This 177-nucleotide RNA was probed chemically with DMS. The DMS profile rests on 1,695 reads. The RNA was probed in 150 mM KOAc, 10 mM MgCl2 and 150 mM bicine (pH 8.5) at 24 C. The data come from the RNA Mapping Database (RMDB), library M2PK90.
RNA sequence: GGGAACGACUCGAGUAGAGUCGAAAAGUUGCCCGAGAAGAGAUCACACAGAUGAGACAGAAGGAGCGAUGUCUCAUCACUUGGUUUUCGACAAGUGACGAGUCGUUCCCAAAAUCGCUCCAAUGAAACAUGAUACGGUUUUCGAACCGUAUCAUGUAAAAGAAACAACAACAACAAC
Reactivity to DMS in 0.01 (KOAc 150mM, MgCl2 10mM, bicine 150mM(pH8.5), 24C), signal-to-noise 2, nucleotides 027 to 126: g000u000u010g030c300c040c040g000a080g000a090a140g020a150g010a060u010c110a130c130a100c180a130g000a000u000g000a010g000a030c010a010g000a080a090g020g000a010g030c010g000a070u000g000u000c000u000c000a000u000c000a110c020u000u000g010g000u000u000u000u010c000g020a040c010a080a090g000u010g010a130c000g010a030g020u000c000g010u000u010c000c000c020a010a020a060a030u000c010g020c010u000c000c010a100a120u000g000a140a040